Source: RMDB library OK2TST, as collected in RNAgym. Chemical mapping of a 177-nucleotide RNA with DMS and 2A3. High 2A3 reactivity points to a flexible backbone, as in loops and unpaired stretches. For 2A3 the reverse transcriptase was SuperScript II with manganese. Values cover nucleotides 27 to 126.
RNA sequence: GGGAACGACUCGAGUAGAGUCGAAAAGCAUGCGGGCGAAUGGCAACAACGCAGCACCAGCUGAAUCCGGCGGUGCAGUAUGCGUGCCUGCAGCAGGACCACUUCCUGCCGGCCACCGUCAACACGCCUAUUAUGUGAGAUUCGUCUCACAUAAUAGAAAAGAAACAACAACAACAAC
Reactivity to DMS in 0.01 (KOAc 150mM, MgCl2 10mM, bicine 150mM(pH8.5), 24C), signal-to-noise 9, nucleotides 027 to 126: g020c030a050u010g020c300g010g010g010c010g010a120a140u010g010g010c040a130a090c120a120a050c030g020c010a070g010c000a020c010c000a130g020c010u000g000a100a120u010c150c040g010g010c010g000g010u000g010c010a070g000u010a110u000g000c020g010u000g010c090c060u000g010c100a080g010c010a020g010g000a050c200c180a090c200u010u000c010c000u000g010c010c050g000g000c020c040a040c080c020g010u000c030a040a050c050a040c090g010c070
Reactivity to 2A3 in 0.01 (KOAc 150mM, MgCl2 10mM, bicine 150mM(pH8.5), 24C), signal-to-noise 9, nucleotides 027 to 126: g030c050a050u060g010c020g010g010g010c020g060a120a100u100g050g000c030a050a050c020a040a010c080g010c020a020g010c000a000c010c010a070g010c000u030g040a130a200u140c100c050g010g000c010g000g000u010g000c010a010g080u130a070u160g010c020g010u030g010c000c010u040g010c030a010g000c000a000g000g020a020c050c050a100c110u100u030c010c000u010g020c000c010g050g000c010c010a020c020c010g030u030c010a030a030c030a020c070g040c000